[RMDB]
RNA sequence: GGGAACGACUCGAGUAGAGUCGAAAAUGGUCGAUGGACAACUGAACAGCGGGCGAGUGUUGGCCGCACUUCUACUCUGAGUGAACGCGGCAACUGAUAAACGCAACCGACACGGAUGCAACGGUGACCGACGCCGAGAUCGAGGCCUUCUUUGCUGGAUAUUCCCCAUGUUCGCAUGGGGAAUAUCAAAAGAAACAACAACAACAAC
Reactivity to 2A3 in 0.01 (KOAc 150mM, MgCl2 10mM, bicine 150mM(pH8.5), 24C), signal-to-noise 2, nucleotides 027 to 156: u080g040g020u050c050g020a050u090g000g030a050c030a110a020c170u110g010a050a060c010a020g010c030g000g030g010c050g000a040g030u030g020u090u020g120g100c000c000g010c040a020c040u010u030c000u070a120c020u030c130u250g040a030g050u050g020a070a020c030g020c020g040g000c000a010a000c090u080g040a070u040a150a060a000c040g030c030a020a010c010c000g070a000c060a020c230g050g050a070u070g030c010a080a040c060g000g050u010g010a010c020c020g020a040c030g000c000c020g020a010g070a050u060c050g030a090g100g030c010c030u050u000c000u020u070u040g110c040u140g120